Structure probing data (2A3) for a 207-nucleotide construct. As a SHAPE reagent, 2A3 marks flexible, mostly unpaired nucleotides at the ribose 2'-OH. For 2A3, 1,085 sequencing reads were counted.
[RMDB]
RNA sequence: GGGAACGACUCGAGUAGAGUCGAAAAUGAAGCAAAUCCAUAAUUGCCAAUGAUGAGCAAUUCGCUAUUGCCGCCUAAAAACGGUUAGCCGGGGCUGCUAGAGCCUCGUUACCAAAGAUAGCCGGCGUUACGGCAUGAUGGUUCGCCAUCAUGCCAACUAUGAGGCACAGUUCGCUGUGCCUCAUAGAAAAGAAACAACAACAACAAC
Reactivity to 2A3 in 0.01 (KOAc 150mM, MgCl2 10mM, bicine 150mM(pH8.5), 24C), signal-to-noise 2, nucleotides 027 to 156: u080g010a070a020g070c090a050a040a110u060c030c010a040u120a120a050u060u000g010c000c010a160a150u260g130a140u030g010a090g000c010a000a010u040u110c020g010c010u040a030u150u110g000c000c010g040c000c010u020a120a030a000a000a000c020g000g000u040u020a010g020c030c030g010g000g000g000c030u080g060c030u080a030g030a010g190c000c000u000c000g000u030u030a010c000c020a080a020a000g110a040u040a010g020c010c040g020g050c060g110u130u080a060c100g000g000c010a020u000g000a000u000g030g020u020u040c180g000c060c000a000u000c000a000u000g000c000c000a000a000